An RNA of 177 nucleotides, treated with DMS and read out base by base.

[RMDB]
RNA sequence: GGGAACGACUCGAGUAGAGUCGAAAAGGAAUUUGGAUCGCAAAUAAAGACAACAAUGAUGCAUGCAGUGAUUUGGAAGUUUCUGCUAUAGAUGCUUAUCCAUCAACAAGAACUAGAGAUUGGGACGUCCUUAGCACGCUUUCGAGCGUGCUAAGGAAAAAGAAACAACAACAACAAC
Reactivity to DMS in 0.01 (KOAc 150mM, MgCl2 10mM, bicine 150mM(pH8.5), 24C), signal-to-noise 1, nucleotides 027 to 126: g010g040a080a080u010u000u000g020g030a030u000c130g010c040a050a080a070u010a040a050a110g010a050c070a080a060c060a100a050u000g010a080u000g020c070a100u010g000c060a040g000u000g000a070u000u000u000g050g000a040a050g000u000u000u020c060u000g020c060u010a160u010a050g020a010u000g000c030u000u010a060u000c040c010a030u000c090a040a080c100a100a080g000a050a040c090u000a100g040a040g000a020u020u010g000g000g010a160c150g030
The reactions ran in a buffer of 150 mM KOAc, 10 mM MgCl2 and 150 mM bicine (pH 8.5), at 24 C. For DMS the reverse transcriptase was MarathonRT. Source: RMDB library OK2TRN, as collected in RNAgym.